[RMDB]
RNA sequence: GGGAACGACUCGAGUAGAGUCGAAAAAAUACAUAGCAUAAACUGGAAUUAAACUGGAAUUCUUUGUCACCCUAGUAGUCCAUUCUAGUAGUCCUAUUUCACAGGAUGUGAUACACUUAAGGUUAGAAUAAUGGUAGCAAGAGAUAAACAGACAGAAGUCGACUAGGUAUUUCGAUACCUAGUCGACAAAAGAAACAACAACAACAAC
Reactivity to 2A3 in 0.01 (KOAc 150mM, MgCl2 10mM, bicine 150mM(pH8.5), 24C), signal-to-noise 1, nucleotides 027 to 156: a000a000u110a010c040a070u070a070g040c010a020u020a070a150a000c050u070g000g050a040a040u150u020a080a050a040c010u010g000g070a020a070u100u000c070u070u030u090g070u090c000a110c040c010c000u000a010g010u010a000g010u020c010c010a020u020u020c020u070a120g020u000a000g000u070c020c010u050a050u190u160u250c150a150c050a040g120g000a010u020g040u020g020a010u030a040c010a010c060u030u160a040a010g010g000u080u000a010g060a000a060u100a110a010u040g010g000u010a000g040c020a050a000g010a050g000a080u110a050a060a000c000a000g100a000c020a020g230a110a000